[RMDB]
RNA sequence: GGGAACGACUCGAGUAGAGUCGAAAACGCUCUGCGACCAGCAGCGCCUCUGCCGUGGCUUGGGAAAUCAAGCGAAAACGGAUCGCCAUACCGCUUGGGAUCUGCGCCAACCGUGGCACGUCGACGGGCGAUCAGCACCUUUCGAGGUGCUGAUCGCAAAAGAAACAACAACAACAAC
Reactivity to 2A3 in 0.01 (KOAc 150mM, MgCl2 10mM, bicine 150mM(pH8.5), 24C), signal-to-noise 2, nucleotides 027 to 126: c070g030c030u020c000u030g020c060g190a220c040c080a070g000c010a010g020c010g030c000c010u050c010u060g000c000c000g100u070g020g000c050u000u070g100g000g040a030a070a060u080c000a010a010g040c040g020a000a000a000a110c010g010g000a060u040c130g000c120c000a050u070a130c020c020g050c000u020u040g020g010g010a050u010c030u100g060c040g000c040c000a020a010c010c030g040u060g020g020c040a010c070g140u080c040g040a080c040g070g010
Chemical mapping of a 177-nucleotide RNA with 2A3. 2A3 adducts were read by reverse transcription with SuperScript II with manganese. It was measured as part of the RMDB library OK1LIB. The reactions ran in a buffer of 150 mM KOAc, 10 mM MgCl2 and 150 mM bicine (pH 8.5), at 24 C.